[RMDB]
RNA sequence: GGGAACGACUCGAGUAGAGUCGAAAAAGAUCCACGCUACGGCGUGGAUCACACGUUCAUCCCUAUUGGGACGGAAGUAGGCAGAGUGCCGAAGGAACGCAUUAGUCAUGCGCUACGGCGCAUGACACACAUCAGAGUCACUUCGGUGACUCUGAAAGGUAUCUAAUGACUUCGGUCAUUAGAUACCAAAAGAAACAACAACAACAAC
Reactivity to 2A3 in 0.01 (KOAc 150mM, MgCl2 10mM, bicine 150mM(pH8.5), 24C), signal-to-noise 4, nucleotides 027 to 156: a000g000a000u000c000c000a030c000g020c000u040a060c300g120g000c000g000u000g000g000a000u000c000a000c000a000c000g000u000u010c010a030u030c030c000c000u120a300u140u300g000g000g000a000c020g030g020a020a000g010u010a010g010g000c040a030g060a150g300u200g030c000c010g000a010a000g040g020a010a000c010g000c050a050u020u250a040g000u010c000a000u010g000c000g000c020u020a030c270g090g000c010g000c010a010u000g020a000c000a000c000a000c000a080u010c000a000g000a000g000u010c000a000c010u020u040c150g100g010u000g000a000c000u000c000u000g000a000a000a000
Reactivity to DMS in 0.01 (KOAc 150mM, MgCl2 10mM, bicine 150mM(pH8.5), 24C), signal-to-noise 1, nucleotides 027 to 156: a040g000a020u000c000c000a050c020g000c010u000a080c290g120g040c000g000u000g010g010a010u000c000a010c060a010c010g000u030u000c000a070u000c020c020c000u000a180u000u000g040g020g000a040c060g010g020a040a070g000u000a160g010g020c040a120g010a180g050u000g000c040c020g000a100a220g010g010a110a090c090g020c060a090u010u000a160g000u000c040a060u000g020c000g050c000u010a080c300g000g000c000g040c010a000u000g000a030c000a000c090a090c070a130u000c020a020g000a030g030u000c000a000c000u000u000c280g110g020u010g020a010c000u000c000u000g000a020a000a030